An RNA of 177 nucleotides, treated with 2A3 and DMS and read out base by base. It was measured as part of the RMDB library OK2TRN.
RNA sequence: GGGAACGACUCGAGUAGAGUCGAAAAGGCAGUGCCACCUUCCAGCUGGAGCUGUCCCAGGAAGGUGUGACCGGGGAGUGGGCCCGGGGUGGAGUACAGCUGUAUCCAGGACCCAAGUGUCACAUCCCUUGCGUAAUGGGUUCGCCCAUUACGCAAGAAAAGAAACAACAACAACAAC
Reactivity to 2A3 in 0.01 (KOAc 150mM, MgCl2 10mM, bicine 150mM(pH8.5), 24C), signal-to-noise 1, nucleotides 027 to 126: g020g000c030a020g050u020g080c000c010a000c010c000u050u070c020c010a070g020c140u060g030g050a050g010c060u050g090u070c000c000c020a010g070g040a130a040g020g000u010g000u010g020a010c000c020g020g020g000g010a090g110u100g000g000g000c020c000c000g000g000g010g000u050g010g040a020g030u050a100c080a090g100c040u020g100u110a010u000c020c000a020g040g040a050c040c010c000a060a060g090u060g030u080c020a020c010a090u070c010c000
Reactivity to DMS in 0.01 (KOAc 150mM, MgCl2 10mM, bicine 150mM(pH8.5), 24C), signal-to-noise 2, nucleotides 027 to 126: g010g010c030a050g010u000g020c020c010a050c040c020u000u000c060c070a180g030c170u010g010g000a060g010c100u000g000u000c040c010c000a240g000g010a040a060g010g020u020g010u030g000a070c020c020g010g050g020g000a140g020u010g000g010g010c010c020c000g010g000g000g000u000g000g000a040g020u030a060c170a160g030c030u000g020u000a050u010c010c020a090g030g000a080c040c000c000a080a080g000u010g000u000c030a010c060a090u000c040c060
Source information
Reactivities are given for positions 27 through 126. The reactions ran in a buffer of 150 mM KOAc, 10 mM MgCl2 and 150 mM bicine (pH 8.5), at 24 C. 2A3 adducts were read by reverse transcription with SuperScript II with manganese. The DMS profile rests on 2,189 reads. High DMS reactivity at an A or C suggests that its Watson-Crick edge is free.